This 177-nucleotide RNA was probed chemically with 2A3 and DMS. Source: RMDB library OK2TRN, as collected in RNAgym. 2A3 adducts were read by reverse transcription with SuperScript II with manganese. Conditions: 150 mM KOAc, 10 mM MgCl2 and 150 mM bicine (pH 8.5), 24 C. The DMS profile rests on 9,147 reads.
[RMDB]
RNA sequence: GGGAACGACUCGAGUAGAGUCGAAAAACUGGGCGAUCAGACCUGCAGUCAUUUCCACCACGAACAGAAGUGCAUUGAUGCCGAGCAACCAGCGCAGGGUCCCGGAUUCUUGCUUAGCAGAAGCUGCCGAAAGGUUAGAUUUCGAUCUAACCUUUCGAAAAGAAACAACAACAACAAC
Reactivity to 2A3 in 0.01 (KOAc 150mM, MgCl2 10mM, bicine 150mM(pH8.5), 24C), signal-to-noise 3, nucleotides 027 to 126: a000c030u040g000g040g010c030g090a110u080c050a020g130a180c010c020u040g020c040a010g050u060c030a070u020u070u000c020c010a050c020c000a040c040g110a140a030c050a090g110a170a020g070u030g060c030a070u030u090g060a030u090g080c010c010g010a000g000c020a030a080c040c020a020g010c030g000c080a030g030g090g000u050c030c030c000g030g040a040u080u060c020u030u080g010c010u090u100a030g040c010a020g030a200a020g020c030u030g070c030
Reactivity to DMS in 0.01 (KOAc 150mM, MgCl2 10mM, bicine 150mM(pH8.5), 24C), signal-to-noise 7, nucleotides 027 to 126: a110c050u000g010g010g000c060g010a080u000c090a100g010a140c060c020u000g020c050a070g010u010c050a100u010u000u000c020c030a100c100c060a060c080g010a060a080c150a080g000a070a080g020u000g010c070a070u000u010g020a120u000g010c030c020g010a060g000c040a070a070c070c040a050g010c060g010c040a050g000g020g010u000c020c020c020g010g000a130u000u000c050u000u000g010c050u010u010a090g020c030a070g010a080a080g000c050u000g000c100